[RMDB]
RNA sequence: GGGAACGACUCGAGUAGAGUCGAAAAGCGGUGCUGGUGGAGCUACGUGACUCGGACUUCCCCUACGUGCGAGUCGGUAUCGCCAAUCGCUGGGUGCCGCAGGUGAGUUCGAAGCGCGUCGGCCUGGCCUGUGGUCCAGGUUCGCCUGGACCACAGGAAAAGAAACAACAACAACAAC
Reactivity to 2A3 in 0.01 (KOAc 150mM, MgCl2 10mM, bicine 150mM(pH8.5), 24C), signal-to-noise 4, nucleotides 027 to 126: g030c010g000g030u030g030c050u060g030g040u060g020g060a030g000c010u060a020c030g230u150g030a030c000u000c010g010g030a010c000u110u140c030c020c010c000u070a030c070g020u050g160c020g020a010g020u030c030g030g000u060a080u110c060g030c050c040a050a050u120c040g000c060u050g090g010g030u060g030c020c000g010c010a010g100g050u090g050a080g000u040u080c040g050a100a000g030c000g000c000g030u030c010g030g040c000c000u020g010g030
Reactivity to DMS in 0.01 (KOAc 150mM, MgCl2 10mM, bicine 150mM(pH8.5), 24C), signal-to-noise 1, nucleotides 027 to 126: g000c000g000g000u000g040c010u020g010g000u040g020g020a100g020c080u000a000c070g000u030g000a010c010u000c000g050g000a010c000u000u090c010c010c010c030u000a050c160g000u030g000c000g020a030g000u020c030g000g000u010a010u000c040g020c030c030a060a080u020c080g000c010u000g010g030g030u000g000c060c000g000c010a030g000g000u030g010a040g020u030u010c070g050a060a120g020c010g040c060g000u000c100g000g000c020c050u010g030g010
The data come from the RNA Mapping Database (RMDB), library OK1LIB.
The record gives the reactivity of an RNA of 177 nucleotides to 2A3 and DMS.
The 2A3 profile rests on 3,109 reads.
For DMS the reverse transcriptase was MarathonRT.
The RNA was probed in 150 mM KOAc, 10 mM MgCl2 and 150 mM bicine (pH 8.5) at 24 C.
For DMS, 2,308 sequencing reads were counted.